Source information: The record gives the reactivity of an RNA of 177 nucleotides to 2A3 and DMS. For DMS the reverse transcriptase was MarathonRT. The reactions ran in a buffer of 150 mM KOAc, 10 mM MgCl2 and 150 mM bicine (pH 8.5), at 24 C. Reactivities are given for positions 27 through 126. High 2A3 reactivity points to a flexible backbone, as in loops and unpaired stretches. 2A3 adducts were read by reverse transcription with SuperScript II with manganese.

RNA sequence: GGGAACGACUCGAGUAGAGUCGAAAACUUGUACGCUUCGGCGUACAAGAAAUCCCAGGUAUGCAUCCAACAACAACAACAACAGAUGCUAACCAUGUUGUAAAACCAAAGACUUCGGUCUUUGGAACGAUAUCGAUUUGUUCGCAAAUCGAUAUCGAAAAGAAACAACAACAACAAC
Reactivity to 2A3 in 0.01 (KOAc 150mM, MgCl2 10mM, bicine 150mM(pH8.5), 24C), signal-to-noise 2, nucleotides 027 to 126: c010u000u010g000u000a010c000g000c000u020u070c170g160g000c010g010u000a000c000a000a010g010a000a020a010u010c000c010c000a000g040g020u060a030u130g010c010a000u000c090c030a050a010c020a030a020c010a040a000c010a020a020c180a040a010c020a050g000a020u000g000c000u040a060a060c020c020a050u080g030u010u020g010u080a110a080a030a070c010c000a010a000a000g000a000c010u050u110c250g080g010u000c000u000u000u000g000g000a000a000
Reactivity to DMS in 0.01 (KOAc 150mM, MgCl2 10mM, bicine 150mM(pH8.5), 24C), signal-to-noise 2, nucleotides 027 to 126: c000u000u000g000u000a010c000g010c000u010u010c200g030g050c010g010u010a010c000a000a020g000a030a050a110u010c000c000c000a130g000g010u010a080u010g020c030a060u010c020c070a140a140c240a050a090c070a140a080c080a040a050c050a050a050c300a060g000a010u000g010c040u000a220a080c040c030a120u020g010u000u010g000u010a050a060a150a130c000c000a000a000a000g000a000c010u000u010c200g020g000u000c000u000u000u000g000g000a000a070